This 177-nucleotide RNA was probed chemically with DMS.
The reactions ran in a buffer of 150 mM KOAc, 10 mM MgCl2 and 150 mM bicine (pH 8.5), at 24 C.
It was measured as part of the RMDB library TTRDES.
[RMDB]
RNA sequence: GGGAACGACUCGAGUAGAGUCGAAAAGAUAUGGAUACUGUCGACAUGAGCCAGCUUCGGAAACGAAGCUGGCUCAACAGCGACUGUAUCCUAAGUCAAAACAGGCCGUUCUUCGGAACGGCCUGAAGUUAUGUAUUAUGUUCGCAUAAUACAUAACAAAAGAAACAACAACAACAAC
Reactivity to DMS in 0.01 (KOAc 150mM, MgCl2 10mM, bicine 150mM(pH8.5), 24C), signal-to-noise 1, nucleotides 027 to 126: g000a010u000a030u020g010g000a020u000a010c010u000g020u000c000g000a030c090a150u020g030a000g000c000c000a040g040c000u000u000c000g090g010a000a010a010c030g060a040a030g030c010u000g000g020c010u000c000a010a010c150a140g020c020g000a010c000u000g000u000a000u000c000c000u000a000a060g000u000c000a090a120a140a300c000a000g000g010c000c010g010u010u000c010u000u020c230g010g010a010a000c010g020g000c000c010u000g010a010a070